[RMDB]
RNA sequence: GGGAACGACUCGAGUAGAGUCGAAAAGAUAUGGAAUCUGUACACAGCAACAGCUCGGAAACGAGACAUGCUGGUAUGAUUCCUAAGUCAAAAGAUGACUUUCUACCUUCGGGUAGAAAGUCAUCAAUCAAAACGUACUCUUCGGAGUACGUUUUGAAAAAGAAACAACAACAACAAC
Reactivity to 2A3 in 0.01 (KOAc 150mM, MgCl2 10mM, bicine 150mM(pH8.5), 24C), signal-to-noise 1, nucleotides 027 to 126: g020a020u060a030u130g000g020a010a020u030c060u110g090u060a000c300a000c000a090g090c000a010a110c000a250g030c010u000c000g050g000a130a060a060c010g030a000g020a000c020a060u110g000c000u010g030g000u000a000u030g010a010u020u000c010c010u040a170a040g080u070c050a000a030a160a010g010a010u000g000a000c020u000u000u000c000u000a000c000c030u060u120c300g120g020g010u040a050g000a000a000a030g000u000c000a000u000c000a010a010
Reactivity to DMS in 0.01 (KOAc 150mM, MgCl2 10mM, bicine 150mM(pH8.5), 24C), signal-to-noise 2, nucleotides 027 to 126: g000a020u010a300u000g000g000a010a010u000c010u020g060u000a000c010a130c000a010g020c000a010a070c270a180g020c020u010c000g000g000a110a100a220c000g020a010g000a030c100a190u000g020c000u000g000g010u000a010u000g000a000u000u000c000c010u000a030a060g020u000c020a060a060a110a120g000a000u000g010a030c000u010u010u010c000u000a000c000c010u000u010c200g000g000g040u000a000g000a010a000a010g010u000c010a000u000c010a030a090